Structure probing data (DMS and 2A3) for a 177-nucleotide construct. For DMS the reverse transcriptase was MarathonRT.
[RMDB]
RNA sequence: GGGAACGACUCGAGUAGAGUCGAAAAAGGACUCGGACGAGAACCCGUGAGUGGAACCUUUAUCCUUUAUUGGGGAGUACACUCGAGGAGUGGAAGGCGGGGAGGCCGGGGUUCCGGGCUUACCUACGAAUUAAUCUAUGUUCGCAUAGAUUAAUUCAAAAGAAACAACAACAACAAC
Reactivity to DMS in 0.01 (KOAc 150mM, MgCl2 10mM, bicine 150mM(pH8.5), 24C), signal-to-noise 3, nucleotides 027 to 126: a110g010g000a050c030u000c010g000g040a170c070g000a120g000a170a160c030c000c030g010u000g000a020g010u000g010g000a120a110c120c050u000u000u020a120u010c020c030u000u010u010a110u040u010g020g000g000g000a060g020u010a150c050a020c010u000c020g010a080g010g000a110g000u000g010g000a100a100g000g000c110g010g000g000g000a090g010g020c090c070g010g000g010g000u000u000c070c030g020g010g000c040u000u000a040c050c020u000a080c210
Reactivity to 2A3 in 0.01 (KOAc 150mM, MgCl2 10mM, bicine 150mM(pH8.5), 24C), signal-to-noise 2, nucleotides 027 to 126: a000g080g010a050c040u010c020g020g170a000c060g050a060g010a120a070c000c010c070g080u140g030a090g030u090g020g070a060a050c010c000u000u220u190a110u250c040c000u130u180u120a220u240u190g020g000g000g000a020g040u040a020c020a010c040u000c030g040a110g040g040a070g060u040g030g030a090a050g000g000c050g060g000g050g030a010g030g000c080c080g010g010g020g030u180u080c010c000g000g030g030c000u030u050a040c000c010u020a030c030
The reactions ran in a buffer of 150 mM KOAc, 10 mM MgCl2 and 150 mM bicine (pH 8.5), at 24 C. It was measured as part of the RMDB library VIROID. For 2A3, 991 sequencing reads were counted.